[RMDB]
RNA sequence: GGGAACGACUCGAGUAGAGUCGAAAAGAUAUGGAGAGGUGAACUACUCGGUCCAGAGCGUUUGACGUGUUUGAUGUCGGAAACGACAUCAAACACCGAGCUCUGGUCGAGCACCUCUCCUAAGUCACGGUUAAUAAAUGUUCGCAUUUAUUAACCGAAAAGAAACAACAACAACAAC
Reactivity to DMS in 0.01 (KOAc 150mM, MgCl2 10mM, bicine 150mM(pH8.5), 24C), signal-to-noise 2, nucleotides 027 to 126: g000a030u000a230u010g000g000a010g010a030g020g030u000g000a060a030c050u030a300c000u000c000g000g000u030c000c000a010g000a010g010c010g030u010u010u010g000a070c300g030u000g000u010u000u000g010a010u000g020u000c000g000g000a080a050a140c000g020a020c000a000u000c010a000a010a010c010a000c000c070g010a190g000c000u000c000u000g010g000u000c000g000a000g000c010a010c010c000u010c000u000c000c000u000a000a050g000u000c020a300
Reactivity to 2A3 in 0.01 (KOAc 150mM, MgCl2 10mM, bicine 150mM(pH8.5), 24C), signal-to-noise 3, nucleotides 027 to 126: g000a000u020a020u120g010g000a010g000a010g080g020u010g030a040a020c060u190a080c010u300c000g000g050u130c000c000a000g000a000g010c050g070u150u300u300g220a190c150g000u030g000u040u000u000g020a020u000g000u020c010g010g000a030a030a030c020g000a000c010a000u000c010a000a000a000c000a000c000c000g050a010g020c000u000c000u000g000g000u000c000g000a000g040c000a000c000c000u010c000u000c000c000u010a000a000g000u000c010a000

An RNA of 177 nucleotides, treated with DMS and 2A3 and read out base by base. The RNA was probed in 150 mM KOAc, 10 mM MgCl2 and 150 mM bicine (pH 8.5) at 24 C. It was measured as part of the RMDB library TTRINS.